[RMDB]
This 177-nucleotide RNA was probed chemically with 2A3 and DMS. The reactions ran in a buffer of 150 mM KOAc, 10 mM MgCl2 and 150 mM bicine (pH 8.5), at 24 C. Values cover nucleotides 27 to 126. For DMS, 3,760 sequencing reads were counted. For 2A3 the reverse transcriptase was SuperScript II with manganese. Source: RMDB library RFM100, as collected in RNAgym.
RNA sequence: GGGAACGACUCGAGUAGAGUCGAAAAGGUGUGCACCCAGGGCAGCAUGCGCAGGAGCCAACGCGAGGUGAUGCCCUGCAUCUGCGGAGCGGACUUGGUCGUGGUUGCCAGGUUCCGCGCCGCGGCCUUCUAGGCCCGUAUUCGUACGGGCCUAGAAAAAAGAAACAACAACAACAAC
Reactivity to 2A3 in 0.01 (KOAc 150mM, MgCl2 10mM, bicine 150mM(pH8.5), 24C), signal-to-noise 3, nucleotides 027 to 126: g080g000u020g020u060g050c070a050c010c000c020a020g000g010g000c000a010g010c000a010u120g020c010g010c040a090g050g130a110g060c060c020a090a030c060g000c000g020a040g110g040u010g010a020u000g000c000c000c020u000g020c000a040u020c030u040g000c000g000g010a000g040c000g000g000a000c010u020u000g000g010u080c090g190u180g100g030u240u090g020c010c010a000g010g000u220u090c030c010g010c000g000c000c010g000c020g020g000c000c010
Reactivity to DMS in 0.01 (KOAc 150mM, MgCl2 10mM, bicine 150mM(pH8.5), 24C), signal-to-noise 2, nucleotides 027 to 126: g000g010u010g000u030g030c060a180c060c160c060a050g000g000g060c010a030g000c030a000u000g010c000g000c000a110g000g010a200g030c110c250a060a140c070g000c000g000a100g030g030u010g000a080u000g000c020c010c020u030g020c070a070u000c000u010g040c020g000g020a110g030c000g030g020a000c010u000u010g000g000u010c080g020u040g020g000u040u020g020c000c010a020g000g000u010u060c020c000g000c000g040c000c030g020c000g010g000c170c050